The record gives the reactivity of an RNA of 177 nucleotides to DMS and 2A3. Source: RMDB library TTRDES, as collected in RNAgym.

[RMDB]
RNA sequence: GGGAACGACUCGAGUAGAGUCGAAAAAAAGAUAUGGACCUACGAACUACUCUCCGUAACAGCGACGAAGAAGUUUCGGAAACGAAACUUCAGAGCUGGAGAAGGAGAGCGUAGGUCCUAAGUCAAACCUUUAAAGGUUGUUCGCAACCUUUAAAGGAAAAGAAACAACAACAACAAC
Reactivity to DMS in 0.01 (KOAc 150mM, MgCl2 10mM, bicine 150mM(pH8.5), 24C), signal-to-noise 5, nucleotides 027 to 126: a060a070a110g000a070u020a300u000g010g000a000c010c000u010a010c000g000a100a050c090u010a300c010u000c000u000c010c000g010u000a150a280c020a020g010c010g000a200c290g000a130a110g010a030a000g020u000u000u000c000g020g000a110a090a110c000g010a010a000a000c010u000u000c000a010g000a090g010c010u000g010g020a090g000a140a180g000g010a030g000a010g010c030g000u000a020g000g000u000c000c000u000a010a050g010u010c020a070a080a120
Reactivity to 2A3 in 0.01 (KOAc 150mM, MgCl2 10mM, bicine 150mM(pH8.5), 24C), signal-to-noise 4, nucleotides 027 to 126: a000a000a000g090a050u110a050u160g010g000a010c000c010u020a000c000g080a150a040c100u210a050c010u300c000u000c010c010g010u010a050a040c010a000g030c000g300a300c060g000a300a070g010a020a010g040u000u000u010c000g000g020a040a030a010c010g000a000a000a000c010u000u010c000a000g000a000g000c000u000g020g020a010g020a010a020g010g000a010g000a000g010c000g000u000a000g000g010u000c010c000u000a000a010g000u020c020a000a030a170
Values cover nucleotides 27 to 126.